[RMDB]
Chemical mapping of a 207-nucleotide RNA with 2A3 and DMS. The reactions ran in a buffer of 150 mM KOAc, 10 mM MgCl2 and 150 mM bicine (pH 8.5), at 24 C. For DMS the reverse transcriptase was MarathonRT. Values are in units of 0.01, from 0 to 300, in steps of 10. It was measured as part of the RMDB library OK3TST. 2A3 adducts were read by reverse transcription with SuperScript II with manganese.
RNA sequence: GGGAACGACUCGAGUAGAGUCGAAAAUACGGCCUCAUGUCGGAGUGAUUGACUGCGCUCCGUUCUACGGCGUUUGGUCCGAGCAGAGUGAGAUUAUUGUGCAAUCUCGAGACUCGGCGCUGGCGGCCGAAAUAGGCUACACCGUGUACCUGAAGAGAAGGAUACUACGAUUCGUCGUAGUAUCCUUAAAAGAAACAACAACAACAAC
Reactivity to 2A3 in 0.01 (KOAc 150mM, MgCl2 10mM, bicine 150mM(pH8.5), 24C), signal-to-noise 3, nucleotides 027 to 156: u080a010c020g030g000c000c000u050c050a040u140g010u010c000g010g020a000g000u010g020a130u100u100g110a080c120u140g030c010g000c000u000c000c000g030u120u030c010u020a020c000g010g000c010g000u030u030u190g020g000u000c000c000g000a000g020c000a030g050a090g100u180g000a030g030a060u040u150a090u250u290g170u210g080c030a060a050u010c000u010c010g060a080g050a080c010u000c030g000g000c010g010c020u020g000g020c020g050g040c000c000g040a090a030a000u100a000g000g030c010u060a030c030a010c040c040g020u030g030u050a110c040c030u060g000a140a030g020a010g000
Reactivity to DMS in 0.01 (KOAc 150mM, MgCl2 10mM, bicine 150mM(pH8.5), 24C), signal-to-noise 3, nucleotides 027 to 156: u000a090c040g030g020c010c020u000c090a120u010g010u060c010g000g000a050g050u010g000a170u000u000g020a220c110u000g000c020g020c010u000c000c000g040u000u010c030u000a150c040g000g000c010g000u010u010u000g110g000u000c010c010g010a110g000c040a040g010a120g000u010g010a060g030a050u000u000a140u000u020g050u000g050c100a020a060u000c000u000c010g010a300g010a060c010u000c040g000g000c070g020c020u000g010g020c050g030g040c020c010g010a020a090a120u000a120g010g020c020u000a090c030a300c000c030g010u000g010u000a050c030c010u000g020a150a150g010a230g020